[RMDB]
RNA sequence: GGGAACGACUCGAGUAGAGUCGAAAAACUUGCCUACAUGGUUAGAUUACGUAAAUGUGAACCUAAAGAGCUGUUUACUUGUACAUGUGGGAGGUGCACAACCAAAGGCGUGGUAAAAAUAAAGAGAGCAAUAUGGAGCAUUCGUGCUCCAUAUUGCAAAAGAAACAACAACAACAAC
Reactivity to DMS in 0.01 (KOAc 150mM, MgCl2 10mM, bicine 150mM(pH8.5), 24C), signal-to-noise 2, nucleotides 027 to 126: a080c040u000u000g010c000c000u000a050c080a030u010g010g000u010u000a050g000a150u000u020a110c180g010u000a010a030a020u010g030u030g010a080a070c080c040u010a050a070a120g000a050g010c080u010g030u000u000u000a020c040u000u010g010u010a070c080a030u000g000u010g010g010g000a040g010g020u000g000c090a100c080a070a080c040c030a070a050a100g010g020c040g030u000g010g000u000a000a050a050a120a020u010a050a040a140g000a090g000a110
Reactivity to 2A3 in 0.01 (KOAc 150mM, MgCl2 10mM, bicine 150mM(pH8.5), 24C), signal-to-noise 1, nucleotides 027 to 126: a020c020u030u110g190c020c000u080a050c010a050u050g000g090u120u180a080g010a190u110u240a000c060g010u080a030a000a100u140g020u030g030a020a070c060c020u120a150a090a060g100a050g070c030u000g000u020u040u040a040c000u020u080g060u120a040c020a020u030g000u040g090g000g000a000g000g000u030g010c000a030c010a070a060c020c020a020a000a050g050g020c050g060u050g000g000u120a040a080a090a070a040u180a030a050a010g230a000g020a000
Overview:
This 177-nucleotide RNA was probed chemically with DMS and 2A3. The data come from the RNA Mapping Database (RMDB), library OK2TRN. DMS adducts were read by reverse transcription with MarathonRT. For 2A3 the reverse transcriptase was SuperScript II with manganese. The 2A3 profile rests on 851 reads. The DMS profile rests on 1,324 reads.